Overview:
Chemical mapping of a 177-nucleotide RNA with DMS. Values cover nucleotides 27 to 126.

[RMDB]
RNA sequence: GGGAACGACUCGAGUAGAGUCGAAAAGAUAUGGAUGAGAGAGUGUCGUGGCGUACAGCUAGCUGAACAGUCGGAAACGACUGAACAGCUUGGACCUGUGAUCCACGACACUCUCUCAUCCUAAGUCCAAUACUCAAUUCUUCGGAAUUGAGUAUUGAAAAGAAACAACAACAACAAC
Reactivity to DMS in 0.01 (KOAc 150mM, MgCl2 10mM, bicine 150mM(pH8.5), 24C), signal-to-noise 7, nucleotides 027 to 126: g010a110u010a300u000g000g010a020u000g010a020g010a020g010a030g010u000g010u000c000g050u000g020g020c280g000u000a020c010a020g010c020u000a020g020c000u000g000a030a300c010a020g000u010c010g010g000a140a120a280c000g000a010c000u000g000a010a300c000a010g010c000u010u010g020g000a130c300c010u000g000u000g010a080u000c000c010a000c000g000a010c000a000c000u000c000u000c000u000c000a000u000c000c000u000a010a050g010u000c040
For DMS the reverse transcriptase was MarathonRT.
It was measured as part of the RMDB library TTRINS.